[RMDB]
RNA sequence: GGGAACGACUCGAGUAGAGUCGAAAAGAGUGUUAUCGGCACUCCCAGCUCAGCCUCAGCCCAAUGGAAAUAUUUAUGUCGUCAGCGGAGACCCAACACCAGCUAAUAACGGUCUUACAUAUAUUUCCACCCUCGGGGAAUUCGUUCCCCGAGGGUGAAAAGAAACAACAACAACAAC
Reactivity to DMS in 0.01 (KOAc 150mM, MgCl2 10mM, bicine 150mM(pH8.5), 24C), signal-to-noise 1, nucleotides 027 to 126: g030a120g000u000g000u000u010a070u050c090g000g000c000a060c000u000c040c000c000a150g090c000u060c100a040g000c000c000u000c040a080g000c020c030c040a090a050u020g000g000a100a030a100u000a000u000u060u010a010u040g000u000c180g060u000c040a030g100c040g010g040a050g030a060c000c010c110a190a130c110a100c000c010a040g110c000u010a060a180u000a060a040c090g010g000u000c080u000u000a050c110a100u000a020u010a060u000u000u000c000
Reactivity to 2A3 in 0.01 (KOAc 150mM, MgCl2 10mM, bicine 150mM(pH8.5), 24C), signal-to-noise 2, nucleotides 027 to 126: g080a010g030u110g000u090u170a300u160c040g020g030c000a020c010u010c000c030c000a010g000c000u040c020a020g080c000c000u010c000a050g010c050c000c000a020a050u080g020g080a040a070a000u150a060u040u300u070a160u110g070u020c030g040u050c050a000g000c000g000g010a010g000a040c000c000c010a040a020c010a020c060c040a010g030c010u090a050a070u060a230a050c030g020g000u030c000u040u030a010c030a000u080a020u050a010u100u070u000c050